[RMDB]
RNA sequence: GGGAACGACUCGAGUAGAGUCGAAAAAUUCUAAUGUUGGCGAUUCAGCGUAUUUCUGACGCAAAAUUGAUAACUUCUCCAUUGACGUCUAGUCAGACUAAACUGGCUCGGAUACAAUUAGGGAGUUUAUAUACGGACUAUUCGUAGUCCGUAUAUAAAAAGAAACAACAACAACAAC
Reactivity to DMS in 0.01 (KOAc 150mM, MgCl2 10mM, bicine 150mM(pH8.5), 24C), signal-to-noise 5, nucleotides 027 to 126: a140u010u010c020u010a060a070u030g000u000u000g000g000c070g000a060u020u010c110a190g010c220g010u010a070u010u020u030c110u020g000a020c000g000c040a040a060a040a070u000u010g010a090u010a050a040c040u000u010c000u000c060c140a060u000u000g010a090c100g020u000c010u030a020g020u000c010a030g010a140c210u040a070a170a150c010u000g010g000c000u010c110g050g000a020u000a050c030a020a030u000u010a180g010g000g000a010g010u010u000
Reactivity to 2A3 in 0.01 (KOAc 150mM, MgCl2 10mM, bicine 150mM(pH8.5), 24C), signal-to-noise 4, nucleotides 027 to 126: a010u140u050c020u050a120a100u160g040u110u100g100g010c020g060a150u040u070c060a000g010c060g060u080a140u080u270u020c080u110g020a000c000g040c000a120a060a000a090u070u100g040a090u020a090a050c000u070u040c020u000c010c050a020u010u030g040a140c120g010u000c000u010a010g000u000c000a020g000a100c110u270a030a230a110c020u000g000g010c000u060c110g000g000a020u040a140c010a010a020u060u050a080g000g000g040a000g000u000u000
Annotation
Conditions: 150 mM KOAc, 10 mM MgCl2 and 150 mM bicine (pH 8.5), 24 C. The record gives the reactivity of an RNA of 177 nucleotides to DMS and 2A3. High DMS reactivity at an A or C suggests that its Watson-Crick edge is free. DMS adducts were read by reverse transcription with MarathonRT. Source: RMDB libraries RFM100 and RFMREP, as collected in RNAgym.